[RMDB]
RNA sequence: GGGAACGACUCGAGUAGAGUCGAAAAGCCGUCGCCUGGUCGGCUGAUUUCUAGGGUCUCACUUUAAACAGGCUACGCUUGGACCCUUCCGUCUGGAGGGAAAGAGAAGAGAUGGAAUCAGACUGGUCGGACGGACGCCUGUCAAUUGGCAGCCUGACCCUAGUAUACGCUUCGGCGUAUACUAGGGAAAAGAAACAACAACAACAAC
Reactivity to 2A3 in 0.01 (KOAc 150mM, MgCl2 10mM, bicine 150mM(pH8.5), 24C), signal-to-noise 1, nucleotides 027 to 156: g020c010c000g010u020c020g040c030c010u150g000g000u020c020g000g010c020u000g010a010u010u070u000c060u060a080g110g000g110u010c030u030c010a130c070u100u170u190a130a170a030c050a000g010g000c050u050a040c080g000c000u020u010g010g000a030c000c000c000u030u020c090c070g140u190c190u300g010g010a010g020g020g020a000a030a010g070a000g020a150a020g020a000g000a060u170g030g040a000a000u030c040a030g210a270c030u030g000g020u000c000g000g000a010c000g030g000a030c060g040c050c010u000g040u070c010a160a300u160u150g000g000c010a000g030c010c010u050g040a090
Structure probing data (2A3) for a 207-nucleotide construct. For 2A3, 906 sequencing reads were counted. The data come from the RNA Mapping Database (RMDB), library ARCHII.